[RMDB]
RNA sequence: GGGAACGACUCGAGUAGAGUCGAAAAGCUAAGGCAGGCCCUGCCUUAGUCUAAAUCUUGGAAAGAGAUAGGAAAAGCAGCAGAGGACACACUGCAUGUAUGCACUGACCUGUGGCAGUACCAUGUUCCUGACUCCAGUGGGAAAAAAAAAAAAGAAGACGAUGACUUAUUUCGAUAAGUCAUCGUCAAAAGAAACAACAACAACAAC
Reactivity to 2A3 in 0.01 (KOAc 150mM, MgCl2 10mM, bicine 150mM(pH8.5), 24C), signal-to-noise 1, nucleotides 027 to 156: g010c000u000a000a000g000g000c000a000g070g170c010c090c010u010g000c000c000u010u000a000g000u000c000u020a060a060a040u050c010u020u030g020g020a110a070a000g020a050g010a030u070a110g040g010a030a040a060a000g010c030a000g000c010a010g040a060g090g000a020c020a010c000a000c060u010g010c020a010u100g030u110a110u110g010c060a050c170u060g050a090c000c020u050g020u070g060g000c010a000g020u000a060c010c010a010u060g030u030u080c000c000u020g040a050c020u020c010c020a040g060u090g010g000g000a020a000a020a000a000a000a010a010a020a000a000a010g170a060a030

The data come from the RNA Mapping Database (RMDB), library OK3TST. Chemical mapping of a 207-nucleotide RNA with 2A3. For 2A3, 1,092 sequencing reads were counted.